About this RNA
Chemical mapping of a 207-nucleotide RNA with 2A3 and DMS. For 2A3 the reverse transcriptase was SuperScript II with manganese. The reactions ran in a buffer of 150 mM KOAc, 10 mM MgCl2 and 150 mM bicine (pH 8.5), at 24 C.

RNA sequence: GGGAACGACUCGAGUAGAGUCGAAAACAUCUAAAAAUAUCCUUUUGAAUCUGCUGGAUAAGGAAGGUAAAUUACCGCAAUACGGCGAUACGGUAUCACUUUACAGCACUAAACAAUGGAAGACAAAAAACAACAACACAACAUCAUUGAGUGCCAAGACCUUAGUAUUUUUCGAAAUACUAAGGUCAAAAGAAACAACAACAACAAC
Reactivity to 2A3 in 0.01 (KOAc 150mM, MgCl2 10mM, bicine 150mM(pH8.5), 24C), signal-to-noise 9, nucleotides 027 to 156: c020a040u090c040u260a050a040a020a080a050u110a120u130c020c010u050u040u040u090g050a050a060u030c030u100g060c050u170g070g020a050u030a070a020g040g010a030a020g020g010u060a060a130a080u080u060a030c010c010g020c040a040a060u090a130c050g050g010c030g070a040u040a090c040g010g020u040a040u090c040a030c090u060u080u100a050c030a010g010c000a000c010u100a110a160a050c040a020a030u040g040g040a050a040g090a070c140a040a080a050a080a010a010c070a060a020c030a060a010c030a020c010a120a080c020a050u140c000a020u010u070g030a010g020u010g000c000c020a060a050
Reactivity to DMS in 0.01 (KOAc 150mM, MgCl2 10mM, bicine 150mM(pH8.5), 24C), signal-to-noise 3, nucleotides 027 to 156: c060a080u010c050u000a010a080a070a100a140u020a130u000c030c010u000u000u000u000g030a110a120u000c070u000g000c050u000g000g010a110u010a040a240g020g010a060a080g030g030u010a010a060a070u000u000a030c030c020g020c040a090a120u000a300c050g000g030c010g000a150u000a030c030g000g030u000a040u010c090a090c050u020u000u000a100c070a020g000c010a030c040u000a070a050a190c030a060a050u000g010g000a090a130g010a170c090a010a070a040a060a050a090c100a080a070c090a050a060c060a060c030a030a050c040a070u010c050a100u010u000g000a090g030u000g000c020c050a050a270

Annotation:
The DMS profile rests on 5,647 reads. For 2A3, 11,027 sequencing reads were counted. For DMS the reverse transcriptase was MarathonRT.